This 207-nucleotide RNA was probed chemically with 2A3 and DMS. Reactivities are rounded to 0.1 and cut off at 0 and 3. The reactions ran in a buffer of 150 mM KOAc, 10 mM MgCl2 and 150 mM bicine (pH 8.5), at 24 C.
RNA sequence: GGGAACGACUCGAGUAGAGUCGAAAAAUGAACGACUUCCUCGAAGCAGAGGGCUACGAGGGCAUCACGCCCUACCAAGCCGAGAACAUCUUCCGCACCAACAUCCAGACGGCCUACAAUGUGGGCCACUACAAGCGGAUGACCGAACCGGGCGUCAGUGUAAAUACAAUUUCGAUUGUAUUUACACAAAAGAAACAACAACAACAAC
Reactivity to 2A3 in 0.01 (KOAc 150mM, MgCl2 10mM, bicine 150mM(pH8.5), 24C), signal-to-noise 4, nucleotides 027 to 156: a000u140g030a080a020c030g040a020c020u070u040c020c010u020c020g020a080a010g040c080a010g050a090g080g040g000c000u030a030c070g060a030g000g010g000c020a030u150c060a030c130g000c000c000c000u020a070c020c050a060a000g030c010c000g040a030g020a070a020c030a070u030c020u050u010c010c010g000c020a070c050c030a080a100c020a110u080c040c000a020g100a170c110g020g000c010c010u030a020c090a130a150u290g000u020g020g000g020c000c010a010c000u050a060c010a100a050g020c010g010g000a010u020g020a010c010c050g030a060a020c020c010g020g040g020c060g070u060c030a050
Reactivity to DMS in 0.01 (KOAc 150mM, MgCl2 10mM, bicine 150mM(pH8.5), 24C), signal-to-noise 2, nucleotides 027 to 156: a140u020g000a110a170c020g030a110c060u020u000c060c010u010c000g010a100a160g030c040a140g030a060g020g050g000c010u010a080c110g000a020g030g010g000c050a200u000c140a170c100g020c030c000c010u000a070c080c010a110a080g020c000c020g020a160g010a130a090c090a130u000c000u020u000c020c040g040c040a130c070c010a080a110c060a130u000c030c030a150g030a090c110g010g080c010c020u000a010c030a050a110u020g020u000g040g000g010c000c020a050c030u000a030c060a070a110g020c040g000g000a030u010g000a100c040c030g010a080a140c090c050g010g010g030c050g010u000c080a100